Annotation
Structure probing data (2A3 and DMS) for a 177-nucleotide construct. The reactions ran in a buffer of 150 mM KOAc, 10 mM MgCl2 and 150 mM bicine (pH 8.5), at 24 C. 2A3 adducts were read by reverse transcription with SuperScript II with manganese. Reactivities are given for positions 27 through 126. The 2A3 profile rests on 1,755 reads. Source: RMDB library OK2TST, as collected in RNAgym. For DMS the reverse transcriptase was MarathonRT.

RNA sequence: GGGAACGACUCGAGUAGAGUCGAAAAGAGUAUGGAUCGUGACUUUUUAUUAGGAGCAGAUGAUCAAUUAGCGUUUGCUAGUUUUGCCUUAUACUAUAGAAAAUGGUAUAUCAAUCCUGAUGAACCACAACAACCUAGGAUUCGUCCUAGGUUGUUGAAAAGAAACAACAACAACAAC
Reactivity to 2A3 in 0.01 (KOAc 150mM, MgCl2 10mM, bicine 150mM(pH8.5), 24C), signal-to-noise 2, nucleotides 027 to 126: g040a020g050u070a060u150g010g010a010u030c030g050u060g090a100c000u180u060u010u000u120a090u050u050a020g000g020a030g020c040a030g040a150u110g010a040u080c020a020a020u030u020a020g010c030g170u150u160u300g000c010u000a020g010u020u010u070u110g000c000c000u020u000a010u000a020c020u020a010u050a150g270a070a190a040a050u060g000g020u000a050u000a010u070c010a050a050u030c000c010u000g010a010u050g030a020a030c010c010a050
Reactivity to DMS in 0.01 (KOAc 150mM, MgCl2 10mM, bicine 150mM(pH8.5), 24C), signal-to-noise 3, nucleotides 027 to 126: g010a050g010u010a060u010g010g010a040u000c040g030u010g020a110c030u010u000u010u000u000a030u010u010a020g010g000a030g010c050a070g000a050u010g000a070u000c080a040a040u010u000a020g010c010g010u000u010u020g010c000u000a020g010u010u000u010u010g010c120c150u010u000a020u000a020c010u000a030u020a130g020a070a090a080a070u000g010g000u000a010u000a020u000c040a030a070u000c010c020u000g010a020u000g000a040a080c110c050a230